An RNA of 207 nucleotides, treated with 2A3 and DMS and read out base by base. For DMS, 2,223 sequencing reads were counted. For 2A3, 2,313 sequencing reads were counted. Conditions: 150 mM KOAc, 10 mM MgCl2 and 150 mM bicine (pH 8.5), 24 C.
[RMDB]
RNA sequence: GGGAACGACUCGAGUAGAGUCGAAAAGUAGAAUCUGUCAAGCAAAACCCCAAAACCUUACACUUAGAGCAUUUAGCCUGAUUACUCUUUAAAUCAAAUCAGGCAAUAGAGAGAAACUCGAGAGGUGAAACGGGAGUAAUGUUCGCAUUACUCCCAAGAUAAUACUGAGCUUCGGCUCAGUAUUAUCAAAAGAAACAACAACAACAAC
Reactivity to 2A3 in 0.01 (KOAc 150mM, MgCl2 10mM, bicine 150mM(pH8.5), 24C), signal-to-noise 4, nucleotides 027 to 156: g070u090a030g050a070a060u060c070u070g100u120c080a060a030g020c030a080a090a120a210c020c020c020c060a050a090a030a050c070c020u140u110a070c090a050c110u150u160a000g000a000g010c010a050u040u010u090a020g020c000c000u000g010a010u000u050a050c000u040c060u190u300u170a040a050a040u140c080a040a010a010u000c000a000g000g000c010a010a000u000a000g000a000g000a000g010a070a080a010c010u010c030g050a070g000a010g090g040u060g060a080a090a040c080g000g000g000a000g000u000a000a000u010g010u030u040c190g000c060a000u000u000a000c000u000c000c000c000a000a000
Reactivity to DMS in 0.01 (KOAc 150mM, MgCl2 10mM, bicine 150mM(pH8.5), 24C), signal-to-noise 2, nucleotides 027 to 156: g010u000a170g010a190a080u010c030u000g010u000c090a060a100g010c040a120a100a090a140c040c010c010c000a030a060a140a090c080c010u010u010a130c090a070c080u050u010a070g010a040g010c050a300u000u000u000a080g000c010c000u000g010a020u000u000a030c020u010c010u010u000u000a020a050a060u000c070a010a090a050u000c010a000g000g000c010a150a030u000a070g000a150g030a140g000a060a120a060c030u000c010g010a070g010a060g030g010u000g000a070a090a070c090g000g000g000a040g040u010a000a000u000g000u020u000c300g010c000a020u000u000a000c000u000c000c010c000a000a000